[RMDB]
RNA sequence: GGGAACGACUCGAGUAGAGUCGAAAAGGGCGAUACCGGGCCCGAUACCGGAAUUAGUAGUUUUCUACGAGAGGCCCAAUCUGCGGCCAAAUGCAGUGUAGGUCGAAGCGAGGACCGAGACUCGAUAAUUACGUCGAUAGAUGGACGAUUCCAUCAAACUAGUGCAGUCAUUCGUGACUGCACUAGUAAAAGAAACAACAACAACAAC
Reactivity to DMS in 0.01 (KOAc 150mM, MgCl2 10mM, bicine 150mM(pH8.5), 24C), signal-to-noise 2, nucleotides 027 to 156: g040g040g060c050g020a170u000a070c070c000g020g000g010c020c000c060g000a120u000a050c050c040g030g020a110a090u000u000a090g020u000a040g010u010u000u000u000c000u000a070c010g000a120g020a240g000g000c010c010c000a040a160u000c020u000g000c060g030g020c010c160a020a030a100u010g010c090a050g000u000g000u000a170g010g000u020c000g010a170a130g000c040g030a300g030g000a140c020c030g000a160g000a100c030u000c030g010a090u000a070a070u000u000a080c110g020u000c030g000a150u000a060g020a070u000g010g010a110c170g030a220u010u000c000c000a070u020c010a040a160
Reactivity to 2A3 in 0.01 (KOAc 150mM, MgCl2 10mM, bicine 150mM(pH8.5), 24C), signal-to-noise 3, nucleotides 027 to 156: g020g000g000c020g010a000u020a090c000c010g000g020g010c000c000c080g030a010u020a000c010c000g000g040a070a080u120u050a090g020u000a010g010u030u060u060u150c010u010a050c030g010a010g000a040g190g000c010c000c010a000a060u050c010u040g000c010g050g000c080c020a000a010a040u110g000c010a000g040u020g010u150a040g020g010u000c040g030a060a010g050c010g030a020g000g040a070c030c010g020a010g050a020c020u010c020g010a000u060a070a070u150u090a070c100g000u040c030g060a040u050a190g030a000u010g010g010a020c060g110a050u150u070c000c010a010u000c010a010a010

The data come from the RNA Mapping Database (RMDB), library OK3TST. The record gives the reactivity of an RNA of 207 nucleotides to DMS and 2A3. Values are in units of 0.01, from 0 to 300, in steps of 10. For DMS, 3,016 sequencing reads were counted. 2A3 adducts were read by reverse transcription with SuperScript II with manganese. The reactions ran in a buffer of 150 mM KOAc, 10 mM MgCl2 and 150 mM bicine (pH 8.5), at 24 C.